[RMDB]
RNA sequence: GGGAACGACUCGAGUAGAGUCGAAAAGCGCUCCAGGGCCUCAUCGGCACCCGCUUCCAACAGGGAAACUUCCUAGAGCUGGAGGAGUUGCAGCGAGGCACGUACGACACAAUACUGUGCCUCAGCGAGCCAAAGGUUGAUUCGUCAACCUUUGGCUAAAAGAAACAACAACAACAAC
Reactivity to 2A3 in 0.01 (KOAc 150mM, MgCl2 10mM, bicine 150mM(pH8.5), 24C), signal-to-noise 1, nucleotides 027 to 126: g000c000g000c020u010c000c000a010g020g000g020c010c010u090c070a160u260c150g000g000c040a100c000c040c030g030c000u100u000c050c040a150a150c010a070g010g040g050a150a080a090c070u140u070c010c010u020a020g010a030g050c020u030g000g050a030g000g030a030g030u090u170g070c030a020g030c010g010a010g000g000c020a010c000g000u010a000c020g110a070c080a000c030a230a030u050a010c010u120g000u000g000c000c000u000c050a010g000c010g030
Reactivity to DMS in 0.01 (KOAc 150mM, MgCl2 10mM, bicine 150mM(pH8.5), 24C), signal-to-noise 2, nucleotides 027 to 126: g020c060g090c010u010c010c060a120g000g000g000c010c000u000c220a100u000c220g030g020c060a170c040c070c040g000c060u010u000c080c040a100a050c120a130g010g000g020a050a140a110c180u000u000c030c010u010a090g010a050g000c020u000g000g000a090g010g000a080g010u000u000g030c020a100g020c010g010a010g000g010c000a010c020g000u000a030c110g040a140c280a080c190a110a240u000a020c020u010g030u000g000c000c020u000c000a020g020c010g000